The record gives the reactivity of an RNA of 207 nucleotides to 2A3. Source: RMDB library OK3TST, as collected in RNAgym. For 2A3 the reverse transcriptase was SuperScript II with manganese.
[RMDB]
RNA sequence: GGGAACGACUCGAGUAGAGUCGAAAAGCUGAGUUAUGAUGGUUUGAUGCAUCAUAGUCUGAGUAGUGAUCCUCAGACACUCAGCACAGACAGUAUGUCUCUAUGGAUCACUACAUAGAGGCUUCUGCAUCAAACCAGAAGCACAUACUGUAGCUGACCCAUACGUCGUGUUCGCACGACGUAUGGGAAAAGAAACAACAACAACAAC
Reactivity to 2A3 in 0.01 (KOAc 150mM, MgCl2 10mM, bicine 150mM(pH8.5), 24C), signal-to-noise 1, nucleotides 027 to 156: g020c000u010g000a020g020u100u060a010u010g030a000u060g010g000u020u000u030g000a010u010g000c020a000u080c080a120u230a040g000u010c010u020g100a030g180u000a000g000u000g000a010u000c000c000u030c040a000g000a000c000a000c000u060c020a010g100c030a010c010a050g170a000c000a000g150u170a030u090g020u010c030u030c030u010a100u090g000g020a000u010c000a000c020u020a000c000a020u300a020g300a050g010g020c000u240u010c060u080g000c000a010u000c000a010a000a000c000c000a000g000a000a000g030c080a000c000a030u030a000c000u030g060u150a020g050c070u020g030a000